An RNA of 177 nucleotides, treated with 2A3 and DMS and read out base by base.

RNA sequence: GGGAACGACUCGAGUAGAGUCGAAAAGUGUCCGCACUAAGUUCGGCAUCAAUAUGGUGACCUCCCGGGAGCGGGGGACCACCAGGUUGCCUAAGGAGGGGUGAACCGGCCCAGGUCGGAAACGGAGCGUAGAUGACGGUUUCGACCGUCAUCUACGAAAAGAAACAACAACAACAAC
Reactivity to 2A3 in 0.01 (KOAc 150mM, MgCl2 10mM, bicine 150mM(pH8.5), 24C), signal-to-noise 3, nucleotides 027 to 126: g120u100g040u000c010c020g060c020a040c020u090a030a080g120u070u100c070g000g000c000a000u010c010a050a210u130a120u210g000g040u000g050a080c000c000u070c000c000c000g050g100g070a180g140c100g000g010g000g000g040a070c130c000a010c000c000a000g000g000u020u010g000c000c000u010a030a020g050g020a030g000g070g000g010u070g030a070a040c020c000g030g010c010c010c010a020g050g050u040c010g060g000a030a060a030c040g060g000a070g030
Reactivity to DMS in 0.01 (KOAc 150mM, MgCl2 10mM, bicine 150mM(pH8.5), 24C), signal-to-noise 3, nucleotides 027 to 126: g000u040g010u020c040c010g040c060a030c030u020a060a250g010u000u020c120g020g020c010a030u000c020a060a100u020a150u000g000g020u000g000a110c050c010u000c000c000c000g000g000g010a150g010c010g010g010g010g000g000a050c040c010a010c000c010a020g000g000u000u000g010c040c010u000a080a040g000g010a280g000g000g000g000u000g000a120a080c010c030g000g000c020c010c070a080g000g010u020c030g000g000a030a070a050c100g000g030a150g000